Structure probing data (2A3 and DMS) for a 177-nucleotide construct.
RNA sequence: GGGAACGACUCGAGUAGAGUCGAAAACGUGAAGAAAGACGAAGGCCUGGUCUCUUUACGAGGAGGCUACACAUGUCCGUACAACAAAGAUGGGUGUAUGGACUCAGAAGGUGGCAAUACGUACUGACAGGCGAGUCAUAUUCGUAUGACUCGCCUGAAAAGAAACAACAACAACAAC
Reactivity to 2A3 in 0.01 (KOAc 150mM, MgCl2 10mM, bicine 150mM(pH8.5), 24C), signal-to-noise 1, nucleotides 027 to 126: c010g050u090g070a020a090g090a020a220a050g020a000c100g050a120a030g120g010c030c000u080g050g090u050c000u000c010u020u090u090a040c030g010a010g000g020a040g180g000c050u070a020c020a010c020a040u110g000u000c000c000g000u000a040c000a060a000c000a020a220a040g210a170u160g170g100g000u040g010u000a000u010g010g000a000c000u040c010a240g000a240a040g020g010u010g010g000c000a010a010u170a150c070g050u020a100c050u050g100a030
Reactivity to DMS in 0.01 (KOAc 150mM, MgCl2 10mM, bicine 150mM(pH8.5), 24C), signal-to-noise 1, nucleotides 027 to 126: c040g020u000g010a090a070g000a130a030a090g020a010c000g030a210a170g000g000c020c040u010g000g010u000c020u000c020u000u000u020a010c070g010a080g010g000a120g000g000c030u000a030c080a050c070a110u000g000u000c010c020g040u000a000c050a010a000c040a060a140a200g000a130u010g000g000g010u000g000u000a020u000g010g000a040c000u010c250a040g000a060a100g020g000u000g000g000c010a040a210u000a070c090g040u000a100c220u030g050a180
For DMS, 843 sequencing reads were counted. The RNA was probed in 150 mM KOAc, 10 mM MgCl2 and 150 mM bicine (pH 8.5) at 24 C. The data come from the RNA Mapping Database (RMDB), library OK2TRN. DMS adducts were read by reverse transcription with MarathonRT.